[RMDB]
RNA sequence: GGGAACGACUCGAGUAGAGUCGAAAAACAGGUCACUGUCAGCACUCUGGACAGAGCCCCGAGCCCUGCCUCUGGGUAGGGGCUGUCUUCCCAUCCCCAAUGUGGGUAGGGCCCUGCCCUCUGGCGACUACGUGAUCUAGUUCGCUAGAUCACGUAGAAAAGAAACAACAACAACAAC
Reactivity to DMS in 0.01 (KOAc 150mM, MgCl2 10mM, bicine 150mM(pH8.5), 24C), signal-to-noise 5, nucleotides 027 to 126: a110c120a110g000g010u010c040a140c020u010g000u010c010a080g010c160a090c200u010c040u020g020g010a050c040a030g010a260g000c100c000c020c040g000a080g000c010c000c000u020g010c030c000u000c150u010g000g000g010u010a100g040g000g010g020c010u010g010u030c060u010u000c000c010c000a120u010c060c030c020c060a070a130u020g010u050g010g000g010u010a060g010g000g000c020c000c010u010g000c010c000c000u020c060u010g010g010c050g010a300
Reactivity to 2A3 in 0.01 (KOAc 150mM, MgCl2 10mM, bicine 150mM(pH8.5), 24C), signal-to-noise 9, nucleotides 027 to 126: a000c030a010g020g040u090c040a020c200u010g020u030c000a020g060c070a080c090u190c060u130g060g030a010c010a010g040a020g030c000c000c010c010g030a050g080c000c000c020u050g030c000c020u070c050u060g000g000g030u050a160g050g000g010g000c000u000g040u020c020u020u030c000c000c010a060u150c050c020c010c050a090a190u300g030u140g020g010g020u030a040g020g010g010c000c000c020u020g000c000c000c000u040c030u020g020g000c010g040a040